[RMDB]
RNA sequence: GGGAACGACUCGAGUAGAGUCGAAAAGCCGAUGAAUUGCCGAGAAGCCUGGCUCGAAAUCGUCGUCGCAUCGACGACGGUCCUGCCAUGAGACCGUAACGAGGACAUGUCGCCUCGAAUGGCGUCGUAUAACAUGAGUGGUUCGCCACUCAUGUAACGAAUUAUACGCUUUCGAGCGUAUAAUUCGAAAAGAAACAACAACAACAAC
Reactivity to 2A3 in 0.01 (KOAc 150mM, MgCl2 10mM, bicine 150mM(pH8.5), 24C), signal-to-noise 4, nucleotides 027 to 156: g050c010c000g020a040u100g040a020a190u150u110g020c030c000g040a060g030a170a000g030c030c040u060g000g060c040u040c070g080a070a060a060u030c010g000u000c000g020u000c030g020c120a120u150c080g010a010c000g000a000c000g000g000u000c000c000u040g000c000c000a030u060g010a010g000a060c010c010g070u110a020a010c010g000a020g010g020a020c060a160u200g080u140c150g010c000c000u020c030g010a020a040u060g010g000c000g020u060c030g000u050a110u040a190a020c000a000u000g000a000g000u000g000g010u060u060c140g060c040c000a020c020u010c000a000u000g000u000a000a000
Reactivity to DMS in 0.01 (KOAc 150mM, MgCl2 10mM, bicine 150mM(pH8.5), 24C), signal-to-noise 1, nucleotides 027 to 156: g030c010c050g010a130u010g020a130a110u010u010g020c070c030g000a240g000a100a120g010c070c060u000g000g050c000u000c050g000a040a060a030u000c030g050u000c010g030u000c050g000c270a170u010c050g010a010c000g010a010c000g030g050u000c010c000u000g040c090c050a100u000g000a170g030a020c010c020g030u010a040a130c050g010a100g030g000a080c040a110u000g010u020c000g020c000c000u000c000g000a050a090u020g030g000c010g040u020c050g000u000a120u000a110a060c010a040u010g030a030g050u000g000g000u000u000c300g000c000c000a000c000u000c000a000u010g000u010a000a230